This 177-nucleotide RNA was probed chemically with 2A3 and DMS. 2A3 adducts were read by reverse transcription with SuperScript II with manganese. Values cover nucleotides 27 to 126. The RNA was probed in 150 mM KOAc, 10 mM MgCl2 and 150 mM bicine (pH 8.5) at 24 C.

RNA sequence: GGGAACGACUCGAGUAGAGUCGAAAACUGGCCCUCGAAAUAAGCAGCAGAGGGGACGAGCGGUAUAGAAUACCGGUCUUGUGAACAUCAGAGGAUGUCAUGCGGCAGGGUUGCCAGUAACUCCCACCUAAAGAUAAGAGUUCGCUCUUAUCUUUAGAAAAGAAACAACAACAACAAC
Reactivity to 2A3 in 0.01 (KOAc 150mM, MgCl2 10mM, bicine 150mM(pH8.5), 24C), signal-to-noise 9, nucleotides 027 to 126: c000u000g010g000c000c050c010u010c020g100a080a090a090u270a170a040g020c030a000g000c010a010g050a070g080g050g020g010a010c030g020a030g100c010g000g020u020a050u040a090g300a300a040u020a030c000c000g020g060u020c000u020u070g060u050g080a080a030c000a020u020c030a040g130a140g300g030a050u010g010u030c010a040u040g010c000g020g000c010a020g030g030g000u090u120g010c000c000a000g000u010a030a050c040u010c010c000c000a030c000
Reactivity to DMS in 0.01 (KOAc 150mM, MgCl2 10mM, bicine 150mM(pH8.5), 24C), signal-to-noise 9, nucleotides 027 to 126: c010u000g010g010c010c210c000u000c060g000a080a110a140u030a100a150g010c030a040g020c030a060g000a110g020g000g010g010a050c030g010a050g010c030g000g000u000a030u010a120g020a090a300u000a010c000c000g000g000u010c010u000u000g010u010g010a090a040c020a020u000c020a180g020a120g020g010a020u010g000u000c030a090u000g000c010g010g040c020a110g000g000g000u010u020g010c010c000a020g000u000a070a100c190u010c000c000c000a120c210
DMS adducts were read by reverse transcription with MarathonRT. The data come from the RNA Mapping Database (RMDB), libraries RFM100 and RFMREP.